[RMDB]
RNA sequence: GGGAACGACUCGAGUAGAGUCGAAAACUGAAUCCAUCUUUGCUUUUCUUUUACAGAACGCAAUAGUCAUUAUAACAUGUCUUCUUUUAAUGACUCAGUCGGUCUUGGCUACUAGAAGACACAUGCAAUUGAAUUUGUCUAGUAUCCUUAUGUAUCAGCUAGCCGUAGGAUUCGUCCUACGGCUAGCAAAAGAAACAACAACAACAAC
Reactivity to 2A3 in 0.01 (KOAc 150mM, MgCl2 10mM, bicine 150mM(pH8.5), 24C), signal-to-noise 1, nucleotides 027 to 156: c060u040g050a030a070u070c040c000a040u000c070u070u150u040g030c010u130u090u030u020c000u000u210u010u120a200c210a100g010a030a000c020g050c020a040a200u030a020g010u000c000a000u000u040a020u000a080a050c080a150u100g010u070c040u020u000c000u000u220u020u020a040a040u020g000a000c000u010c030a010g090u160c040g020g010u020c070u030u030g000g000c000u010a020c000u010a010g010a100a020g090a040c040a000c010a080u180g040c020a000a150u070u040g020a030a080u060u040u070g090u010c040u000a030g000u010a010u030c000c040u020u160a090u220g050u010a070u100c040a000